[RMDB]
RNA sequence: GGGAACGACUCGAGUAGAGUCGAAAAGAUAUGGAUAUGGUGAGCAUCGAUCUAUAUCGAAUCGGAAACGAUUCGAGUAUAGGGAGCUCCCAUAUCCUAAGUCAAAAGCAACCCUUCGGGGUUGCAAGUUCCAUACAUACUUCGGUAUGUAUGGAACAAAAGAAACAACAACAACAAC
Reactivity to 2A3 in 0.01 (KOAc 150mM, MgCl2 10mM, bicine 150mM(pH8.5), 24C), signal-to-noise 3, nucleotides 027 to 126: g010a020u040a030u140g000g000a010u010a000u000g030g030u300g060a000g010c040a200u300c110g170a100u100c030u020a000u000a010u030c000g000a000a010u000c000g000g030a040a040a050c010g010a000u000u010c010g000a040g070u060a000u000a010g090g050g030a010g010c000u000c010c000c000a000u010a000u010c000c000u000a010a000g010u000c040a080a090a060a070g000c010a000a000c020c010c000u010u050c300g120g000g000g000u000u000g000c000a000a010
Reactivity to DMS in 0.01 (KOAc 150mM, MgCl2 10mM, bicine 150mM(pH8.5), 24C), signal-to-noise 4, nucleotides 027 to 126: g000a050u010a300u000g010g000a010u000a000u000g010g010u020g010a000g010c000a300u000c130g000a060u000c000u010a010u000a020u010c000g000a040a010u000c000g010g010a090a090a210c000g000a000u000u000c010g010a050g010u000a010u000a010g010g010g000a060g010c000u000c000c010c000a000u010a000u000c000c000u000a020a090g000u010c010a130a120a170a190g020c000a010a000c010c000c000u000u010c210g050g000g010g020u000u000g020c010a010a040